[RMDB]
RNA sequence: GGGAACGACUCGAGUAGAGUCGAAAACACAUGCAGGACGAUAUUCACUGUCCGGCCCUCAAUAUGACUAAAUAUCGACCUAAUUCUUACGGGACACGGCGAAUCUCACAAGCGAAUUGAAAAACAGUCAAGUUAUAUAUUUCGAUAUAUAACUUGAAAAAGAAACAACAACAACAAC
Reactivity to DMS in 0.01 (KOAc 150mM, MgCl2 10mM, bicine 150mM(pH8.5), 24C), signal-to-noise 8, nucleotides 027 to 126: c070a070c160a070u020g010c120a030g000g020a090c040g000a040u010a030u020u010c130a080c140u020g000u000c010c050g000g000c010c010c010u010c050a090a100u040a070u040g010a090c060u020a070a050a030u020a050u010c010g000a090c020c010u010a080a100u010u010c040u010u020a110c130g010g000g000a060c060a050c060g000g000c040g000a060a060u010c020u000c050a060c110a060a090g010c110g000a070a070u040u010g000a060a040a070a060a110c190a090g010
Reactivity to 2A3 in 0.01 (KOAc 150mM, MgCl2 10mM, bicine 150mM(pH8.5), 24C), signal-to-noise 9, nucleotides 027 to 126: c100a000c010a030u150g070c060a030g010g020a010c010g020a020u030a070u100u110c100a040c140u080g020u010c010c000g030g010c010c000c000u090c030a100a100u170a140u280g060a060c020u100a060a040a050u090a040u030c010g030a100c010c010u040a060a100u140u080c050u080u100a030c040g030g000g020a020c010a010c040g030g000c010g030a040a050u030c020u020c030a040c010a060a050g030c030g070a040a040u080u080g060a070a040a030a060a020c020a010g070
Conditions: 150 mM KOAc, 10 mM MgCl2 and 150 mM bicine (pH 8.5), 24 C. Structure probing data (DMS and 2A3) for a 177-nucleotide construct. It was measured as part of the RMDB library OK1LIB. The DMS profile rests on 18,713 reads. The 2A3 profile rests on 23,979 reads. 2A3 adducts were read by reverse transcription with SuperScript II with manganese.